[RMDB]
RNA sequence: GGGAACGACUCGAGUAGAGUCGAAAAGAUAUGGAUGUUCCUAGACAUGUUGUCAUUCGGAAACGAAUGUCAACAACAGCUAGGACAUCCUAAGUCAAACGUUCGUAGGCUUCGGCCUACGAACGAAUCACGCAGUAUACUUCGGUAUACUGCGUGAAAAAGAAACAACAACAACAAC
Reactivity to DMS in 0.01 (KOAc 150mM, MgCl2 10mM, bicine 150mM(pH8.5), 24C), signal-to-noise 2, nucleotides 027 to 126: g010a020u010a090u010g010g000a020u010g010u000u000c020c000u000a000g000a090c150a150u010g020u000u000g000u020c000a020u000u010c000g040g000a020a040a050c000g010a010a000u000g010u010c000a020a010c000a060a070c260a190g020c010u000a000g000g000a010c000a000u000c000c000u000a010a060g010u000c020a100a160a300c030g000u010u000c010g000u020a000g010g000c000u000u020c300g050g030c000c010u000a000c000g000a000a000c000g010a070a060
Reactivity to 2A3 in 0.01 (KOAc 150mM, MgCl2 10mM, bicine 150mM(pH8.5), 24C), signal-to-noise 3, nucleotides 027 to 126: g010a010u030a000u050g010g000a010u010g050u300u300c020c000u000a020g020a070c200a300u300g010u000u000g020u000c000a000u010u000c000g000g000a020a020a000c000g010a000a000u020g000u010c010a000a000c020a080a090c130a030g010c010u000a010g020g000a000c000a000u000c000c000u010a020a000g000u000c030a180a070a110c030g000u000u030c010g000u010a020g000g030c000u030u080c300g190g000c000c000u000a010c000g010a000a000c010g010a010a070
The record gives the reactivity of an RNA of 177 nucleotides to DMS and 2A3. For DMS, 2,523 sequencing reads were counted. Reactivities are given for positions 27 through 126. 2A3 adducts were read by reverse transcription with SuperScript II with manganese. The data come from the RNA Mapping Database (RMDB), library TTRDES. The RNA was probed in 150 mM KOAc, 10 mM MgCl2 and 150 mM bicine (pH 8.5) at 24 C.